[RMDB]
RNA sequence: GGGAACGACUCGAGUAGAGUCGAAAAGCAUUGCCAAGAGGCAGUCAAAACAAUUUCAUAUUUUGUCAAAUAUGUUCGUUAAUACUAGAACUUGUGCCCUGCCUUGUUGAAUGGCUGCCUGUCAAUAAUGUAUCUAUCAAUUCGUUGAUAGAUACAUAAAAGAAACAACAACAACAAC
Reactivity to DMS in 0.01 (KOAc 150mM, MgCl2 10mM, bicine 150mM(pH8.5), 24C), signal-to-noise 9, nucleotides 027 to 126: g010c080a070u000u010g010c130c040a110a120g010a060g010g010c010a020g010u000c050a080a090a120a060c050a060a070u010u000u000c030a040u000a030u000u000u000u010g010u010c160a060a040a030u000a020u000g010u000u000c130g010u000u000a070a100u010a080c160u000a090g010a050a040c060u000u000g000u000g010c090c110c040u000g010c070c040u000u000g010u000u000g000a090a110u000g010g010c010u000g000c000c010u000g010u000c080a050a090u010a080
Reactivity to 2A3 in 0.01 (KOAc 150mM, MgCl2 10mM, bicine 150mM(pH8.5), 24C), signal-to-noise 9, nucleotides 027 to 126: g010c010a070u070u180g060c030c020a090a030g060a040g120g000c010a000g040u060c040a010a090a050a080c020a030a090u060u120u120c020a020u050a050u060u060u050u170g200u130c060a010a040a030u080a030u050g030u050u060c040g040u060u120a110a050u090a250c100u070a060g060a120a020c010u030u060g040u050g050c000c000c030u030g020c000c000u020u030g040u030u060g080a130a090u050g020g010c010u010g000c000c000u050g050u070c050a070a090u160a080